[RMDB]
RNA sequence: GGGAACGACUCGAGUAGAGUCGAAAAUGGAGUCAGAGUCUGAUGACUACUGAGCACAUGGCCUCUGACCACUCAGUAAACUCCUGGAGCACAGCUGGCAGACAGCAGGUUGGGAAGACCAGCCUCGCGCGGCGUACUCUUUCGAGAGUACGCCGCGAAAAGAAACAACAACAACAAC
Reactivity to 2A3 in 0.01 (KOAc 150mM, MgCl2 10mM, bicine 150mM(pH8.5), 24C), signal-to-noise 1, nucleotides 027 to 126: u110g060g030a040g060u040c050a030g070a010g090u020c010u050g020a050u250g000a150c000u180a300c130u150g090a040g030c010a080c020a150u050g000g020c030c090u000c030u020g010a090c000c000a090c000u020c000a040g070u180a020a130a040c000u010c000c000u040g060g080a010g000c020a010c000a030g000c010u000g030g000c070a000g050a120c010a060g040c000a000g000g000u000u010g000g000g010a240a000g020a190c000c000a000g110c000c000u000c000g070